[RMDB]
RNA sequence: GGGAACGACUCGAGUAGAGUCGAAAAUACUGCUGGAUGAGAAUGGGGUAGGACCCCUUUGUAAGGCUGAUAAAUUGUACAUAACAGCAGCAGAUAUAUGUGGCUUCCUAACCCAGCCAAAUGACCAAAUAAGUGAGCUGUUCGCAGCUCACUUAUUAAAAGAAACAACAACAACAAC
Reactivity to 2A3 in 0.01 (KOAc 150mM, MgCl2 10mM, bicine 150mM(pH8.5), 24C), signal-to-noise 2, nucleotides 027 to 126: u120a010c030u010g000c000u000g040g130a200u070g060a100g050a150a090u120g010g000g050g000u070a050g090g090a080c000c010c000c000u000u020u030g030u040a060a060g060g030c000u060g010a060u220a160a110a010u110u080g080u150a060c080a150u240a300a000c050a000g000c020a000g020c000a020g080a020u030a000u030a000u220g120u090g060g000c020u010u000c000c020u040a100a100c010c000c000a000g000c030c000a040a100a080u250g060a050c050c000a030
Reactivity to DMS in 0.01 (KOAc 150mM, MgCl2 10mM, bicine 150mM(pH8.5), 24C), signal-to-noise 4, nucleotides 027 to 126: u000a140c030u000g030c070u000g020g040a090u000g040a180g000a080a110u030g020g010g000g020u020a060g020g000a300c300c000c010c000u000u000u000g010u010a110a170g000g020c030u000g010a070u030a040a070a200u020u030g010u030a040c210a090u040a040a100c030a070g020c010a000g050c010a030g020a070u040a070u000a030u000g020u030g000g000c110u000u020c010c030u000a030a020c020c020c010a020g000c090c020a040a020a070u040g000a110c100c080a080